[RMDB]
Conditions: 150 mM KOAc, 10 mM MgCl2 and 150 mM bicine (pH 8.5), 24 C.
Chemical mapping of a 177-nucleotide RNA with DMS and 2A3.
2A3 adducts were read by reverse transcription with SuperScript II with manganese.
For DMS, 3,757 sequencing reads were counted.
RNA sequence: GGGAACGACUCGAGUAGAGUCGAAAAGGAGUGCUACCGAAAGGUAGCACUCCAACAAAUCGGUGUAACUGCAGCCCGCAUUACACCGUGCGGCACAGCGGAAACGCUGAUGUCGUAUAAAGGGCUAGGACCGUAUAUUAUUCGUAAUAUACGGUCCAAAAGAAACAACAACAACAAC
Reactivity to DMS in 0.01 (KOAc 150mM, MgCl2 10mM, bicine 150mM(pH8.5), 24C), signal-to-noise 3, nucleotides 027 to 126: g010g010a040g030u000g010c000u000a000c000c010g010a100a120a170g010g010u000a020g000c000a000c000u000c000c000a010a020c110a050a080a050u010c010g010g010u000g000u000a000a010c300u020g020c020a070g000c010c000c000g020c140a050u000u000a000c010a020c020c000g010u000g010c000g010g010c000a020c010a010g000c010g010g000a130a060a180c010g000c000u000g010a040u000g050u000c000g010u000a030u010a070a100a130g010g020g000c030u000a100
Reactivity to 2A3 in 0.01 (KOAc 150mM, MgCl2 10mM, bicine 150mM(pH8.5), 24C), signal-to-noise 1, nucleotides 027 to 126: g000g000a000g010u000g000c000u000a000c020c000g060a070a090a090g030g000u000a000g000c000a000c010u010c000c000a010a000c000a000a000a010u090c000g020g010u000g000u020a020a050c140u040g020c020a020g000c020c000c000g030c000a000u020u010a000c000a000c000c000g000u020g000c030g000g010c000a000c000a010g000c010g030g010a060a060a030c010g000c000u010g010a040u010g000u000c010g000u000a000u000a010a110a000g010g010g000c020u020a060
Reactivities are rounded to 0.1 and cut off at 0 and 3. It was measured as part of the RMDB library OK2TRN.